[RMDB]
RNA sequence: GGGAACGACUCGAGUAGAGUCGAAAAGCGGUCUCGUCACGCUCUUCGGCGGGGUGCGCGCCCCCUCAGUGGAUCUCGCGGUUGCGGAUCAGCAGCAUCGCACCGCCGCAGAGCAGCGCGGCGUAGCCCGCGAACACCAGUGCGCUGCCCCACCAGGCAUGCUCUGUACUUUCGAGUACAGAGCAUGAAAAGAAACAACAACAACAAC
Reactivity to DMS in 0.01 (KOAc 150mM, MgCl2 10mM, bicine 150mM(pH8.5), 24C), signal-to-noise 1, nucleotides 027 to 156: g000c020g020g010u010c030u010c100g010u000c010a020c010g000c010u010c000u010u010c000g000g030c000g040g020g020g050u000g020c000g020c200g030c020c010c010c040c080u000c100a130g060u000g040g010a130u000c010u020c040g170c060g030g010u000u000g030c030g020g020a060u000c050a060g010c040a060g010c010a130u000c010g030c020a080c010c010g010c010c020g020c050a190g030a050g000c110a020g020c030g000c020g020g000c010g000u000a050g010c080c010c010g020c010g000a050a050c060a070c040c020a090g010u000g000c050g010c030u000g020c010c000c020c030a120c050c000a110g020g020
Reactivity to 2A3 in 0.01 (KOAc 150mM, MgCl2 10mM, bicine 150mM(pH8.5), 24C), signal-to-noise 1, nucleotides 027 to 156: g010c000g010g010u030c000u000c040g020u010c030a020c060g000c000u020c040u070u030c040g060g000c010g020g050g010g020u070g010c040g000c030g020c000c000c010c000c000u210c140a170g080u140g090g100a130u070c110u100c090g000c000g120g140u170u260g010c030g150g000a180u150c050a020g010c030a020g000c010a060u110c020g000c020a050c000c000g070c000c000g000c060a010g000a000g120c020a000g040c020g000c010g010g000c000g020u040a000g000c000c000c000g000c000g020a040a010c010a030c000c000a000g050u050g080c050g010c060u030g080c030c000c000c000a050c020c000a010g060g020